[RMDB]
RNA sequence: GGGAACGACUCGAGUAGAGUCGAAAAGCCACGAUCUUCGACCGUGGCGUCAUCAGCUCCUCGGCCGUCAGGGCGCCGAACUGCAGCGAGCGGCGCAUCAGCCACGCCGUGGCGUCAUCGAGUGCGCGCUACCAGGGAACUUCGGUUCCCUGGUAGCAAAAGAAACAACAACAACAAC
Reactivity to 2A3 in 0.01 (KOAc 150mM, MgCl2 10mM, bicine 150mM(pH8.5), 24C), signal-to-noise 1, nucleotides 027 to 126: g020c020c040a020c040g080a080u040c070u150u220c280g090a080c000c010g000u000g010g050c000g010u000c020a100u020c100a010g020c010u010c010c000u010c000g060g020c040c040g050u020c020a090g180g010g000c010g000c020c040g040a080a030c080u070g030c020a020g050c030g070a040g010c020g020g050c000g000c000a080u100c040a030g070c030c080a010c020g160c040c060g030u080g020g020c030g050u010c040a040u140c020g100a070g060u030g060c010g010c000
Reactivity to DMS in 0.01 (KOAc 150mM, MgCl2 10mM, bicine 150mM(pH8.5), 24C), signal-to-noise 1, nucleotides 027 to 126: g000c000c000a100c000g030a000u000c010u000u010c240g000a050c020c020g030u020g000g000c000g000u020c090a100u010c130a120g000c050u010c040c000u000c050g010g020c050c000g020u000c140a080g000g020g000c120g000c030c010g010a040a100c090u010g030c010a030g000c070g010a180g030c030g020g000c000g020c020a060u000c100a110g000c060c110a060c050g020c030c080g010u000g000g020c030g020u000c120a080u000c060g000a100g040u000g020c040g020c070
Source: RMDB library OK2TST, as collected in RNAgym. This 177-nucleotide RNA was probed chemically with 2A3 and DMS. The DMS profile rests on 871 reads. For DMS the reverse transcriptase was MarathonRT. 2A3 adducts were read by reverse transcription with SuperScript II with manganese.